[RMDB]
RNA sequence: GGGAACGACUCGAGUAGAGUCGAAAACUGUGGAGUGACGAGGGGAGAGCGAAGACAUGGCUACACACGAUCACAUCCCUCAUUUCAUCUUUCGGGUCUUCAGCUUGCCUCGCCUGAAUCACUGCACCUUAUUCCCCGGUUUCGACCGGGGAAUAAGAAAAGAAACAACAACAACAAC
Reactivity to DMS in 0.01 (KOAc 150mM, MgCl2 10mM, bicine 150mM(pH8.5), 24C), signal-to-noise 3, nucleotides 027 to 126: c040u020g050u020g010g000a030g010u020g000a020c050g020a220g010g010g000g010a040g010a040g020c020g040a030a030g020a040c060a100u020g010g000c030u010a080c090a080c040a060c040g000a040u000c070a090c080a090u000c020c000c000u030c090a100u000u010u020c040a030u000c050u000u000u010c020g010g000g010u010c000u020u020c010a090g010c030u010u010g010c040c040u000c030g000c030c010u030g000a220a110u000c020a030c010u010g000c020a060c000
Reactivity to 2A3 in 0.01 (KOAc 150mM, MgCl2 10mM, bicine 150mM(pH8.5), 24C), signal-to-noise 7, nucleotides 027 to 126: c010u020g010u000g020g120a000g000u000g000a010c010g010a030g020g000g010g000a040g000a000g020c020g020a010a020g010a020c030a080u150g050g000c020u090a020c030a020c020a020c070g050a070u080c020a010c020a140u050c010c000c010u040c020a040u060u110u080c030a060u020c010u020u110u090c050g050g020g000u000c000u020u020c030a030g020c010u050u130g060c020c030u050c030g260c030c010u040g020a010a010u010c000a000c010u050g020c020a010c000
Background: An RNA of 177 nucleotides, treated with DMS and 2A3 and read out base by base. It was measured as part of the RMDB libraries RFM100 and RFMREP. DMS adducts were read by reverse transcription with MarathonRT. Conditions: 150 mM KOAc, 10 mM MgCl2 and 150 mM bicine (pH 8.5), 24 C. Reactivities are given for positions 27 through 126.